[RMDB]
RNA sequence: GGGAACGACUCGAGUAGAGUCGAAAAUGGUAGGUUUGCUACCGCAGGGUAUUCGGAGCACUACUCAGGAUCUCCAACAGUUCUGCCACACGUGAAAUAGUAGUACUGAGACUACUGUGGUAGCCAAGGGUUAAUCUUACUUCGGUAAGAUUAGCCCAAAAGAAACAACAACAACAAC
Reactivity to 2A3 in 0.01 (KOAc 150mM, MgCl2 10mM, bicine 150mM(pH8.5), 24C), signal-to-noise 9, nucleotides 027 to 126: u160g060g040u080a100g020g100u070u080u110g020c010u020a060c000c000g000c010a010g030g030g020u120a260u070u120c040g020g020a030g090c100a020c050u060a020c010u040c070a020g060g040a090u040c030u040c070c010a060a060c030a080g030u070u020c010u020g030c040c010a090c020a040c150g190u190g150a090a050a090u120a050g010u000a000g000u020a040c020u040g020a020g020a060c010u240a160c000u150g000u010g000g000u000a010g000c020c010a080a110
Reactivity to DMS in 0.01 (KOAc 150mM, MgCl2 10mM, bicine 150mM(pH8.5), 24C), signal-to-noise 7, nucleotides 027 to 126: u030g010g030u000a030g000g020u020u020u000g010c010u000a010c010c010g020c050a020g010g000g000u000a040u030u010c030g020g000a060g010c180a060c020u000a020c030u010c090a070g010g000a070u020c050u020c080c140a110a130c230a090g010u010u010c020u000g010c040c020a050c090a090c220g000u020g010a100a100a090u020a030g010u010a010g010u010a070c030u000g010a070g000a040c010u000a030c010u000g020u000g000g010u000a010g000c060c230a060a120

Chemical mapping of a 177-nucleotide RNA with 2A3 and DMS. The 2A3 profile rests on 27,797 reads. The DMS profile rests on 20,849 reads. For 2A3 the reverse transcriptase was SuperScript II with manganese. The data come from the RNA Mapping Database (RMDB), library OK1LIB. The RNA was probed in 150 mM KOAc, 10 mM MgCl2 and 150 mM bicine (pH 8.5) at 24 C.